RNA sequence: GGGAACGACUCGAGUAGAGUCGAAAAGCGGUGAUGCUGAGGUGUGAGGCUGAGAAGUCUCACUUGGAGACAUCGUCGAAUUAAAACUGGUUUAAGUACACCUCAGAACUUAGACGAGUAGAAGAUAGUAAGUGUUUGUAUUCGUACAAGCACUUACAAAAGAAACAACAACAACAAC
Reactivity to DMS in 0.01 (KOAc 150mM, MgCl2 10mM, bicine 150mM(pH8.5), 24C), signal-to-noise 7, nucleotides 027 to 126: g020c000g010g000u000g010a010u000g010c010u010g000a030g000g000u000g000u000g000a010g010g010c000u000g000a250g010a200a020g010u000c000u000c000a010c010u030u040g010g000a140g010a070c010a010u000c000g000u010c040g000a110a090u020u030a050a050a110a040c010u000g010g020u000u000u000a000a000g010u000a300c070a020c000c010u000c010a010g000a070a020c000u000u000a000g000a010c000g000a020g020u000a120g010a120a090g000a110u030a090
Reactivity to 2A3 in 0.01 (KOAc 150mM, MgCl2 10mM, bicine 150mM(pH8.5), 24C), signal-to-noise 9, nucleotides 027 to 126: g070c010g010g010u020g010a020u040g070c010u010g000a000g000g010u010g000u000g010a010g000g000c000u010g020a020g020a120a010g010u000c000u000c000a000c000u010u090g120g040a180g010a020c000a010u000c000g050u040c030g040a050a050u200u170a100a080a020a020c010u080g080g000u000u010u010a000a000g000u000a010c020a020c020c000u000c000a000g000a010a000c000u000u000a000g000a010c060g030a010g010u050a040g030a190a020g060a090u220a060